[RMDB]
RNA sequence: GGGAACGACUCGAGUAGAGUCGAAAAAUCGAAUGUACCGGAAGACGGAUCAUCGUUCAAGUAUCCUCAAUUUCAUGGUAUACCUAAAAUCCACAAGAAACCUACUGGAUUUAGGCCCAUAAUUCCGGUUAUAGACCGUUUUCGAACGGUCUAUAACAAAAGAAACAACAACAACAAC
Reactivity to 2A3 in 0.01 (KOAc 150mM, MgCl2 10mM, bicine 150mM(pH8.5), 24C), signal-to-noise 9, nucleotides 027 to 126: a000u040c010g020a040a040u040g010u060a060c000c010g010g040a060a060g110a050c040g000g040a080u030c020a050u060c050g080u100u100c110a090a010g050u050a080u040c010c000u080c040a110a180u050u070u150c070a020u030g000g000u040a050u070a140c000c000u030a040a060a030a120u010c000c010a030c050a050a080g140a220a150a100c050c070u130a100c110u080g000g000a000u000u000u010a000g010g000c000c000c000a070u140a050a080u120u050c050c030g030
Reactivity to DMS in 0.01 (KOAc 150mM, MgCl2 10mM, bicine 150mM(pH8.5), 24C), signal-to-noise 6, nucleotides 027 to 126: a050u020c070g000a050a080u000g010u000a060c010c010g010g020a020a040g010a120c190g010g000a040u010c070a090u050c140g000u010u030c230a120a150g010u020a020u010c000c000u000c150a080a080u020u010u020c090a040u000g010g000u010a110u020a090c000c000u000a020a010a030a050u010c010c000a020c160a140a110g010a090a070a130c300c120u020a120c300u020g000g010a020u000u000u000a000g000g000c060c010c010a030u020a030a080u030u000c020c040g010